[RMDB]
RNA sequence: GGGAACGACUCGAGUAGAGUCGAAAAGCAAAGAGAUGGCUGGCAUGCACGGUGUCCAGCACUCCAAUAGGUGGCUCUGUGCAGGCUCCACCCCACACAGGCAUUCCUGUGCAGGCCAUUUCCUCAUACUCCCCUCUGGGCAACCCCAGGGGUCCAAUGAUUAGCUUUUAUUCGUAAAAGCUAAUCAAAAAGAAACAACAACAACAAC
Reactivity to DMS in 0.01 (KOAc 150mM, MgCl2 10mM, bicine 150mM(pH8.5), 24C), signal-to-noise 2, nucleotides 027 to 156: g020c080a060a130a080g040a060g020a060u010g010g020c020u000g020g030c030a050u010g000c090a060c110g010g010u000g010u030c020c000a150g040c010a070c020u010c050c050a080a170u000a150g020g050u000g030g030c030u000c010u000g050u000g010c000a060g010g000c070u010c020c060a100c050c000c010c090a090c110a090c090a040g000g020c130a140u000u000c020c020u000g030u000g010c030a080g020g010c020c010a040u000u010u000c000c010u000c060a180u010a150c060u010c030c010c000c030u000c020u020g000g020g050c110a100a150c240c010c000c010a050g020g010g030g010u000c030c030a110a280
Reactivity to 2A3 in 0.01 (KOAc 150mM, MgCl2 10mM, bicine 150mM(pH8.5), 24C), signal-to-noise 4, nucleotides 027 to 156: g040c060a050a080a010g020a000g020a060u120g120g010c010u010g000g010c010a020u070g060c150a050c190g110g000u040g030u100c040c020a020g020c030a020c010u030c010c050a080a160u160a120g070g030u010g010g000c020u020c020u250g000u010g000c000a000g000g030c030u100c060c040a070c040c020c030c000a120c000a050c030a050g040g000c070a060u170u140c010c000u000g010u020g000c020a000g010g010c000c010a000u030u040u020c010c010u130c040a100u100a210c060u140c010c030c000c000u000c010u010g000g000g030c090a100a090c020c000c000c010a000g010g000g010g000u000c030c020a040a060
An RNA of 207 nucleotides, treated with DMS and 2A3 and read out base by base.
Values cover nucleotides 27 to 156.
Conditions: 150 mM KOAc, 10 mM MgCl2 and 150 mM bicine (pH 8.5), 24 C.
As a SHAPE reagent, 2A3 marks flexible, mostly unpaired nucleotides at the ribose 2'-OH.
For DMS, 3,478 sequencing reads were counted.
Source: RMDB library OK3TST, as collected in RNAgym.
For 2A3 the reverse transcriptase was SuperScript II with manganese.